The record gives the reactivity of an RNA of 177 nucleotides to DMS and 2A3.
[RMDB]
RNA sequence: GGGAACGACUCGAGUAGAGUCGAAAACAGAACGUUAUGUAACGUACGGAAGAUAGAUAAUCAGAUUCAAAACAGUUCCACGUAAAUUGUUUGAACUCCUAUAUUAUUAUAUCAGUCGUGGCUGACACAACCCCGAAAAGUUCGCUUUUCGGGGUUGAAAAGAAACAACAACAACAAC
Reactivity to DMS in 0.01 (KOAc 150mM, MgCl2 10mM, bicine 150mM(pH8.5), 24C), signal-to-noise 2, nucleotides 027 to 126: c070a060g010a140a090c120g000u000u020a020u040g000u010a050a030c080g010u050a040c050g000g060a100a030g000a010u000a010g010a020u030a050a040u010c300a140g000a040u000u020c010a010a000a010a030c010a020g000u000u000c020c190a100c180g000u030a060a000a020u000u000g050u020u000u000g000a000a000c120u000c010c010u030a060u050a100u000u000a000u000u000a090u010a050u000c000a060g050u000c010g000u010g000g000c070u040g020a230c070a130
Reactivity to 2A3 in 0.01 (KOAc 150mM, MgCl2 10mM, bicine 150mM(pH8.5), 24C), signal-to-noise 3, nucleotides 027 to 126: c040a000g140a070a020c060g000u060u100a210u300g100u100a030a020c030g010u120a010c010g030g040a050a170g030a110u070a040g040a020u060a050a010u140c010a000g060a070u040u010c010a030a000a050a060c010a000g010u000u050c030c070a060c010g090u100a030a040a020u010u010g030u030u000u000g000a020a030c090u100c090c010u080a130u010a000u250u000a010u130u040a170u020a030u170c020a010g040u060c010g000u000g060g000c020u040g000a010c030a000
Annotation
The RNA was probed in 150 mM KOAc, 10 mM MgCl2 and 150 mM bicine (pH 8.5) at 24 C. The 2A3 profile rests on 1,092 reads.